Chemical mapping of a 177-nucleotide RNA with DMS and 2A3. For DMS the reverse transcriptase was MarathonRT. The reactions ran in a buffer of 150 mM KOAc, 10 mM MgCl2 and 150 mM bicine (pH 8.5), at 24 C. Source: RMDB library OK2TRN, as collected in RNAgym. For DMS, 2,563 sequencing reads were counted.
RNA sequence: GGGAACGACUCGAGUAGAGUCGAAAACCAGUCAGAGUGUGGGCCCAAGAAUCAGCGCCAGGGGACCCUCAUGGCUGGCCACACGAGAUCGUGCAACACUAUUACCAUCGCCAUCCAGUGUAUACUGAAAUACAACCCGUUUCGACGGGUUGUAUUUAAAAGAAACAACAACAACAAC
Reactivity to DMS in 0.01 (KOAc 150mM, MgCl2 10mM, bicine 150mM(pH8.5), 24C), signal-to-noise 3, nucleotides 027 to 126: c000c010a110g010u000c020a050g010a300g030u000g020u010g010g000g000c000c000c040a120a110g020a120a120u010c110a060g030c090g030c030c040a150g000g010g010g000a070c040c020c010u000c030a060u010g010g010c000u000g000g010c030c080a070c050a040c080g000a140g010a050u010c050g000u000g010c030a060a050c080a080c090u000a080u000u010a080c050c030a050u000c050g000c030c020a040u000c060c020a050g000u000g000u010a110u010a070c050u010g000
Reactivity to 2A3 in 0.01 (KOAc 150mM, MgCl2 10mM, bicine 150mM(pH8.5), 24C), signal-to-noise 1, nucleotides 027 to 126: c000c000a000g020u000c020a030g140a020g120u130g010u100g040g030g010c000c000c020a080a000g140a090a120u170c110a040g070c060g070c140c080a070g020g000g050g110a260c000c030c000u000c010a070u040g090g010c000u000g000g080c040c020a020c000a000c000g140a110g000a140u080c020g020u050g020c050a040a040c020a040c130u060a070u160u090a050c010c000a060u010c070g010c000c000a020u040c000c010a030g050u040g030u050a050u050a090c070u080g030